This 177-nucleotide RNA was probed chemically with 2A3 and DMS.

RNA sequence: GGGAACGACUCGAGUAGAGUCGAAAAGGAGAUGAAGUCAAACCCUGAAACUGAUGACUAUAGAUAUUUUGAUCCCAAAAUGCUGCGGGGCAAUGACAGCUCAGUUCCAAGGAACAAAAAUCCACUCCACUUGCCUAUAAUUCGUUAUAGGCAAGUGAAAAGAAACAACAACAACAAC
Reactivity to 2A3 in 0.01 (KOAc 150mM, MgCl2 10mM, bicine 150mM(pH8.5), 24C), signal-to-noise 5, nucleotides 027 to 126: g050g000a030g010a050u110g070a160a030g060u060c060a040a020a190c010c020c010u020g030a040a040a020c030u040g020a040u080g050a050c020u040a040u110a200g070a060u070a160u140u110u050u060g100a150u100c010c000c000a020a100a030a050u220g020c070u020g040c050g030g000g000g000c020a020a030u060g020a030c010a010g000c010u010c020a020g000u020u000c010c000a030a030g020g010a040a040c050a070a120a010a010a020u030c000c040a030c020u010c020
Reactivity to DMS in 0.01 (KOAc 150mM, MgCl2 10mM, bicine 150mM(pH8.5), 24C), signal-to-noise 5, nucleotides 027 to 126: g000g000a080g020a100u000g000a140a120g010u010c120a050a150a120c040c020c010u000g010a030a040a050c030u000g000a030u000g000a140c030u010a160u000a100g010a150u010a070u000u000u000u000g010a070u010c010c020c010a060a130a080a070u010g020c140u010g000c300g000g000g000g020c020a020a060u000g010a100c120a040g010c020u010c030a020g020u000u000c010c010a030a060g010g020a110a060c080a010a050a060a100a070u000c030c020a150c080u000c040
Notes
2A3 adducts were read by reverse transcription with SuperScript II with manganese. High DMS reactivity at an A or C suggests that its Watson-Crick edge is free. For DMS the reverse transcriptase was MarathonRT. Values cover nucleotides 27 to 126. It was measured as part of the RMDB library OK2TST. The DMS profile rests on 4,207 reads.